[RMDB]
RNA sequence: GGGAACGACUCGAGUAGAGUCGAAAAGAUUUCUAGAUGAUGGAAGAGCAGUGAAAGAUCUUUGAAGAGCCGAAUGUUCAGAAUCAACAGAUACCAAUGAAGCAUCUGUAUCUCCUGACGAGAAAUAUCGCAGUAUCAGGUUCGCCUGAUACUGCGAAAAAGAAACAACAACAACAAC
Reactivity to DMS in 0.01 (KOAc 150mM, MgCl2 10mM, bicine 150mM(pH8.5), 24C), signal-to-noise 2, nucleotides 027 to 126: g010a140u000u000u000c020u020a100g050a080u020g000a100u000g000g010a040a070g030a040g010c020a050g050u000g000a040a100a090g000a060u000c070u000u000u020g030a070a030g000a120g000c050c080g020a080a070u050g030u050u000c020a090g010a110a170u020c070a050a050c120a010g000a040u030a040c070c060a060a070u040g000a130a110g010c080a000u020c030u000g000u000a110u000c030u000c020c020u000g060a170c190g010a040g000a050a120a010u000a080
Reactivity to 2A3 in 0.01 (KOAc 150mM, MgCl2 10mM, bicine 150mM(pH8.5), 24C), signal-to-noise 2, nucleotides 027 to 126: g060a040u030u060u020c030u010a050g110a210u150g000a000u080g000g120a080a050g000a090g000c010a000g000u000g080a000a000a110g070a030u000c120u040u100u070g130a180a050g080a040g060c040c100g030a080a020u250g040u190u080c000a010g020a110a020u020c020a050a080c000a010g050a000u030a200c000c060a030a040u230g010a030a000g030c020a080u100c000u070g060u050a290u000c060u060c030c080u080g030a050c130g010a000g090a070a080a000u190a050